Chemical mapping of a 177-nucleotide RNA with 2A3. It was measured as part of the RMDB library RFM100. Reactivities are given for positions 27 through 126. 2A3 adducts were read by reverse transcription with SuperScript II with manganese. Conditions: 150 mM KOAc, 10 mM MgCl2 and 150 mM bicine (pH 8.5), 24 C.
RNA sequence: GGGAACGACUCGAGUAGAGUCGAAAAGUUUCUUCUCAAGGUGAAGAUAACUCUUUGUAAAUGUCCUACAGAAAUAUAGUAGCUUUCUGUUCUUCCUUUGCAAGUAAAAAGGGUGGGUCGUUCCACUGCCUUAACGGACCUUCGGGUCCGUUAAGGCAAAAGAAACAACAACAACAAC
Reactivity to 2A3 in 0.01 (KOAc 150mM, MgCl2 10mM, bicine 150mM(pH8.5), 24C), signal-to-noise 2, nucleotides 027 to 126: g000u000u000u000c000u030u000c020u010c120a060a110g300g020u050g000a020a010g000a220u210a050a010c000u000c090u060u060u030g120u010a050a140a170u190g010u110c000c000u000a000c010a000g040a030a030a000u120a000u070a100g230u090a050g110c040u000u000u000c010u000g030u000u030c040u070u050c020c020u000u040u020g010c070a080a070g060u120a070a050a030a000a000g100g010g030u140g000g000g000u000c000g000u000u000c000c000a010c040u030